[RMDB]
RNA sequence: GGGAACGACUCGAGUAGAGUCGAAAACUGAGCAUAGACCCUAGGCUUGCUGGAGCGAGACUCAUGCUCUCCAAGGUUAAGAGGAUAGUGCUUGUCAUGGGCUCUAAGGGUGGGGUGGGGAAGACCCACAUGUAACUUUCUUCGGAAAGUUACAUGUAAAAGAAACAACAACAACAAC
Reactivity to 2A3 in 0.01 (KOAc 150mM, MgCl2 10mM, bicine 150mM(pH8.5), 24C), signal-to-noise 6, nucleotides 027 to 126: c010u040g010a010g000c010a010u030a130g130a190c020c010c000u020a030g050g040c010u020u050g000c080u130g050g020a020g000c060g030a040g090a130c040u080c140a050u220g020c010u000c000u000c030c010a060a120g220g050u080u070a160a040g050a080g080g010a040u100a080g060u040g010c010u040u050g020u040c030a080u060g000g000g050c050u070c080u190a080a060g050g050g050u280g040g040g000g070u260g020g000g030g000a020a040g030a040c010c020c000
Reactivity to DMS in 0.01 (KOAc 150mM, MgCl2 10mM, bicine 150mM(pH8.5), 24C), signal-to-noise 7, nucleotides 027 to 126: c120u010g020a040g020c030a050u000a120g000a160c010c000c020u000a090g010g000c010u000u000g020c150u010g020g010a030g000c030g020a110g010a100c160u010c200a100u000g010c010u010c010u010c300c030a050a080g010g000u010u000a050a070g000a100g010g010a160u000a060g010u000g000c010u000u000g010u000c070a080u000g010g010g010c290u000c100u010a060a090g000g010g010u010g000g010g010g000u010g010g000g020g020a090a070g010a050c020c010c030